[RMDB]
RNA sequence: GGGAACGACUCGAGUAGAGUCGAAAAGCAUUUGUGACAUAGCAGCAGGUUGCCAUGGAGAUGAUAGCUUCAUCAGCAACUCUGCUUUGCAAUGACUUCACAGCAAGGUUACUAAGAAGCAGAUGGGAAUGAAGUGGACAUUCGUGUCCACUUCAUUAAAAGAAACAACAACAACAAC
Reactivity to DMS in 0.01 (KOAc 150mM, MgCl2 10mM, bicine 150mM(pH8.5), 24C), signal-to-noise 6, nucleotides 027 to 126: g020c050a080u010u020u010g010u000g000a110c030a040u010a050g030c020a060g010c020a010g000g000u000u000g020c000c300a030u000g010g000a000g010a120u040g030a200u020a150g010c020u000u000c010a000u010c300a150g000c000a010a010c000u020c010u010g000c000u000u030u020g000c040a090a030u010g010a160c130u010u010c010a010c030a060g000c150a090a070g000g010u020u010a090c080u030a070a080g010a060a130g000c060a040g000a080u010g000g000g020
Reactivity to 2A3 in 0.01 (KOAc 150mM, MgCl2 10mM, bicine 150mM(pH8.5), 24C), signal-to-noise 4, nucleotides 027 to 126: g040c020a050u000u120u190g040u000g000a010c000a040u130a020g000c010a000g000c030a020g010g010u000u010g000c030c020a010u040g050g000a010g000a030u280g050a180u150a210g080c000u040u000c000a000u000c050a010g000c000a000a000c010u030c010u200g000c000u030u010u030g000c010a010a030u020g040a050c070u010u030c080a040c030a040g000c020a020a040g090g010u070u030a060c070u110a130a070g060a070a020g060c040a000g040a130u130g040g000g080